[RMDB]
RNA sequence: GGGAACGACUCGAGUAGAGUCGAAAAUGAAUUUUACAUUUAUGUGCAAGUUGGGCAAAGUGUCUUAUUUUUUAAGUAUUUCAAAGUAAAAUUACAUGUUAAUACGUAGUAUUAAUGGCGAGACUCCUAUACUAGAUCUAUUCGUAGAUCUAGUAUAAAAAGAAACAACAACAACAAC
Reactivity to 2A3 in 0.01 (KOAc 150mM, MgCl2 10mM, bicine 150mM(pH8.5), 24C), signal-to-noise 8, nucleotides 027 to 126: u020g010a010a010u000u010u010u030a020c020a080u090u110u080a140u140g060u010g030c020a060a150g050u160u100g040g020g000c030a100a140a190g090u070g020u050c010u020u120a160u130u160u050u030u100u150a110a020g020u020a080u030u120u080c050a070a090a010g000u010a010a010a030a020u050u020a090c020a040u090g010u040u030a020a010u020a020c160g110u080a030g020u000a100u020u010a030a010u040g040g010c050g010a040g040a060c030u010c010c010
Reactivity to DMS in 0.01 (KOAc 150mM, MgCl2 10mM, bicine 150mM(pH8.5), 24C), signal-to-noise 8, nucleotides 027 to 126: u010g010a060a020u000u010u000u010a030c020a080u020u020u010a050u020g010u000g010c050a060a070g010u010u010g010g010g010c090a070a080a090g020u000g010u020c010u000u000a010u000u020u010u040u030u020a040a080g000u010a030u010u010u010c030a040a070a140g010u000a010a010a010a010u000u000a080c010a050u010g000u000u000a010a010u000a010c010g000u010a100g010u000a010u000u000a010a020u000g010g010c120g000a100g010a090c140u000c020c030
Structure probing data (2A3 and DMS) for a 177-nucleotide construct. The RNA was probed in 150 mM KOAc, 10 mM MgCl2 and 150 mM bicine (pH 8.5) at 24 C. Values cover nucleotides 27 to 126.